RNA sequence: GGGAACGACUCGAGUAGAGUCGAAAACAGGGAGAACUGGCAAGCAGCAGCAUAAAGUACAUGAUAAUCCCAGAAAAGCUCACAUGUUCUUUGCCGAGACCAUAGGUUAUAGCUGAAACGAAGCUUCUCACCUGGAUUGUUUCGACAAUCCAGGUGAAAAAGAAACAACAACAACAAC
Reactivity to DMS in 0.01 (KOAc 150mM, MgCl2 10mM, bicine 150mM(pH8.5), 24C), signal-to-noise 1, nucleotides 027 to 126: c070a110g000g000g000a050g040a070a110c070u000g000g100c040a120a070g050c050a050g030c030a090g010c080a110u000a060a060a070g030u000a060c070a030u000g000a080u040a140a070u000c000c010c010a180g000a070a120a100a080g020c050u000c090a070c080a030u000g010u010u000c020u000u000u000g010c020c020g010a120g010a010c040c030a060u020a040g020g010u000u020a070u030a070g000c010u000g000a090a100a150c090g000a110a120g030c070u020u010c140